[RMDB]
RNA sequence: GGGAACGACUCGAGUAGAGUCGAAAAAGAUGUCUUCCAAAAAAAGUACUUCCAAGAACAAGAAUCCAAGUAUUAGAUCAGAAUCUACACGUACGUCAAUUGUCACAUCCAUCAUACGAAAACAUUAUUUUCUUACGGAAAAUGAUUGAUACUCGAAACCUCCUACUAAUUUCGAUUAGUAGGAGGUAAAAGAAACAACAACAACAAC
Reactivity to 2A3 in 0.01 (KOAc 150mM, MgCl2 10mM, bicine 150mM(pH8.5), 24C), signal-to-noise 4, nucleotides 027 to 156: a000g070a040u090g010u010c010u040u040c020c010a030a110a020a000a030a030a000g020u020a040c020u080u030c030c010a050a050g050a100a050c040a050a010g040a060a040u010c050c020a080a010g020u020a110u120u030a040g030a070u060c030a030g060a120a050u030c040u100a040c060a010c080g040u080a010c020g030u040c040a080a080u050u050g050u070c020a030c010a110u010c040c020a030u050c020a030u060a190c060g080a020a030a100a050c020a040u050u110a060u090u100u030u000c020u060u120a040c040g020g030a010a070a010a020u030g020a020u040u050g020a050u060a060c050u070c050g040a120a110
Reactivity to DMS in 0.01 (KOAc 150mM, MgCl2 10mM, bicine 150mM(pH8.5), 24C), signal-to-noise 2, nucleotides 027 to 156: a080g030a100u010g000u000c020u000u000c020c020a010a000a070a120a070a060a050g030u000a020c060u010u000c030c010a100a090g030a090a100c060a060a080g000a120a110u010c030c020a060a100g020u000a040u000u000a090g030a110u010c080a140g010a070a120u000c050u000a060c050a070c050g040u010a060c030g040u010c030a030a100u000u000g010u000c010a040c040a130u000c010c020a090u010c040a120u000a100c100g010a080a070a070a070c120a090u020u000a300u000u000u000u000c020u000u000a180c130g010g020a020a020a030a030u000g000a000u000u000g020a120u000a090c040u010c010g000a110a150